[RMDB]
RNA sequence: GGGAACGACUCGAGUAGAGUCGAAAACUGACGUUGUGAAAUGACUUGGGAGGUGUAGAAUAAGUGGGAGGCUCUGCCGUCUGUGAAAUACCACUACUCUCAAUGUUGUUUUACUUAUACCAUGAUGCCCCACUAAAGGCUUCGGCCUUUAGUGGGGAAAAGAAACAACAACAACAAC
Reactivity to 2A3 in 0.01 (KOAc 150mM, MgCl2 10mM, bicine 150mM(pH8.5), 24C), signal-to-noise 1, nucleotides 027 to 126: c060u100g100a050c040g160u080u030g000u000g010a010a010a000u030g000a000c000u000u000g000g000g000a000g000g000u070g130u160a090g110a240a150u100a160a000g000u010g020g000g020a020g010g000c020u000c050u300g040c020c020g100u000c020u000g090u010g070a080a000a000u020a000c000c000a000c000u000a000c000u000c000u000c010a000a000u120g000u000u000g020u000u000u000u000a000c000u020u080a140u050a110c000c000a020u150g000a080u300g030